Structure probing data (2A3) for a 207-nucleotide construct.
The RNA was probed in 150 mM KOAc, 10 mM MgCl2 and 150 mM bicine (pH 8.5) at 24 C.
Reactivities are rounded to 0.1 and cut off at 0 and 3.
[RMDB]
RNA sequence: GGGAACGACUCGAGUAGAGUCGAAAAUGGUUACCUGCAGCCCAAGCUUGCUGCACGUCUAGGGCGCAGUAGUCCAGGGUUUCCUUGAUGAUGUCAUACUUAUCCUGUCCCUUUUUUUUCCACAGCUCGCGGUUGAGGACAAACUCUUCGCGGUCUUCCAUCUCAGAAAGUUCGCUUUCUGAGAUGGAAAAGAAACAACAACAACAAC
Reactivity to 2A3 in 0.01 (KOAc 150mM, MgCl2 10mM, bicine 150mM(pH8.5), 24C), signal-to-noise 1, nucleotides 027 to 156: u030g050g030u020u030a020c020c000u000g020c000a140g020c000c030c020a060a020g030c030u100u140g000c030u080g040c040a030c100g030u050c030u150a090g000g010g020c010g010c030a020g010u020a000g030u000c000c030a030g020g000g000u030u150u000c010c000u050u050g020a010u030g010a000u120g060u070c060a050u040a160c020u020u020a030u070c000c000u020g040u030c000c000c000u070u040u010u000u000u000u180u010c100c060a180c030a060g010c010u030c030g030c010g070g170u060u070g000a000g030g020a050c080a100a190a090c040u000c020u030u060c030g010c000g030g030u000c000u030u000